[RMDB]
RNA sequence: GGGAACGACUCGAGUAGAGUCGAAAAUAGCAACACCGACGCUCACAGGUGCCGCAGUAGUUAAUGGAUCGCUACCAUUAGGUAGAUGUGUGCUUGCAUGCGCCGCGGGCGUAGCUGCACCCCAACUAGUGACUCCAUUGCCGUCGGUAAUUAACGCAGUUGAGAAUGUUUUCGAACAUUCUCAACUAAAAGAAACAACAACAACAAC
Reactivity to DMS in 0.01 (KOAc 150mM, MgCl2 10mM, bicine 150mM(pH8.5), 24C), signal-to-noise 4, nucleotides 027 to 156: u010a130g020c020a070a090c050a150c030c010g010a080c020g000c060u010c110a110c080a200g000g020u000g000c000c050g030c030a140g000u000a060g020u010u000a040a090u000g010g020a100u000c120g000c090u000a100c050c000a140u010u010a070g010g010u000a040g010a040u000g010u010g030u010g010c030u010u010g000c020a220u000g000c000g010c010c000g020c200g040g030g030c010g020u000a050g030c020u000g020c010a020c010c020c010c020a050a070c020u000a080g020u000g000a110c030u000c010c010a110u000u000g010c080c030g000u000c020g010g010u000a040a090u010u000a060a110c080g020c150
Reactivity to 2A3 in 0.01 (KOAc 150mM, MgCl2 10mM, bicine 150mM(pH8.5), 24C), signal-to-noise 9, nucleotides 027 to 156: u180a010g050c030a000a070c010a020c080c000g000a010c010g000c010u040c040a170c040a090g030g020u030g040c060c030g050c040a060g100u100a010g010u040u150a080a070u100g040g010a090u130c110g000c050u010a010c010c030a110u190u230a150g000g030u030a030g030a220u080g150u040g010u000g030c030u080u150g000c030a200u120g000c020g000c010c030g290c160g120g070g000c000g000u000a010g000c000u000g000c000a000c000c030c000c000a010a020c010u020a020g090u000g040a030c020u000c020c010a050u040u060g080c060c010g010u010c000g000g010u010a010a040u120u060a060a010c140g000c090
Structure probing data (DMS and 2A3) for a 207-nucleotide construct. Reactivities are given for positions 27 through 156. Source: RMDB library OK3TST, as collected in RNAgym. For DMS the reverse transcriptase was MarathonRT.